[RMDB]
RNA sequence: GGGAACGACUCGAGUAGAGUCGAAAAUCACGGACACGGUGUGCGAUAUGCUCCGCCGGGCGGUCGUACGCGAGGGCGUCACGGCAACGCACCUUGCCGACGUGUACGGUGUGUCCAACGAUGCGGUGACGCGACACGCUCGCGGUCGGUGUGACCAGUACUCGUCAGGUUUCGACCUGACGAGUACAAAAGAAACAACAACAACAAC
Reactivity to 2A3 in 0.01 (KOAc 150mM, MgCl2 10mM, bicine 150mM(pH8.5), 24C), signal-to-noise 3, nucleotides 027 to 156: u080c010a030c050g070g050a060c060a030c110g090g040u070g020u040g030c020g040a120u110a090u300g000c010u020c070c040g030c060c040g000g040g000c030g010g030u000c000g000u040a030c010g000c000g060a030g010g050g040c010g000u030c000a020c060g120g010c010a040a020c020g000c010a040c010c000u010u020g000c040c010g190a270c120g120u290g010u070a020c020g000g000u030g000u020g030u040c080c000a040a020c120g070a030u100g000c000g090g000u000g000a050c010g030c010g120a020c070a020c040g130c010u020c010g010c070g000g000u050c060g020g010u030g000u020g080a040c000c010a010
Chemical mapping of a 207-nucleotide RNA with 2A3. Conditions: 150 mM KOAc, 10 mM MgCl2 and 150 mM bicine (pH 8.5), 24 C. The data come from the RNA Mapping Database (RMDB), library OK3TST. For 2A3 the reverse transcriptase was SuperScript II with manganese. For 2A3, 1,817 sequencing reads were counted.